RNA sequence: GGGAACGACUCGAGUAGAGUCGAAAAACGGAUGGCUACGGCCAGCCGAAUCGGGCCAAAGGCAGUCGCCCGACGACACAGGCGAUCGUUCGCCCAAGCGCUGCACACGACUAUACGUAGUCGUGAAUUGAUCACGCAACCUUCGGGUUGCGUGAAACUUUUAAGGUUAGUUCGCUAACCUUAAAAGAAAAGAAACAACAACAACAAC
Reactivity to 2A3 in 0.01 (KOAc 150mM, MgCl2 10mM, bicine 150mM(pH8.5), 24C), signal-to-noise 3, nucleotides 027 to 156: a000c010g000g010a010u010g000g010c010u010a030c210g090g000c010c000a010g000c010c010g000a010a050u030c010g000g030g000c080c080a130a090a090g120g020c020a010g010u000c020g010c000c000c000g020a010c010g020a010c010a010c050a090g200g050c030g000a020u050c030g100u090u040c050g200c010c020c010a030a020g020c040g000c090u050g010c030a000c010a000c040g010a010c000u030a010u050a120c290g170u030a010g000u000c000g000u000g020a000a000u050u090g070a020u030c000a000c000g000c010a000a010c000c000u040u070c140g090g010g000u020u010g000c000g000u000g000a000a000a000
Reactivity to DMS in 0.01 (KOAc 150mM, MgCl2 10mM, bicine 150mM(pH8.5), 24C), signal-to-noise 1, nucleotides 027 to 156: a160c040g020g000a010u000g020g010c010u000a050c190g090g000c000c010a050g010c050c030g090a070a060u000c030g030g040g050c000c030a030a070a190g050g040c050a060g040u000c140g020c010c020c000g010a080c020g000a150c070a060c090a080g010g000c010g020a050u000c100g000u000u010c030g010c010c010c060a040a100g000c050g010c050u000g050c010a300c000a000c000g000a020c020u010a100u000a150c200g030u010a000g030u000c010g020u010g000a030a080u000u000g010a160u020c000a000c000g000c000a000a010c000c020u000u000c300g060g010g000u000u000g010c000g000u010g000a000a010a070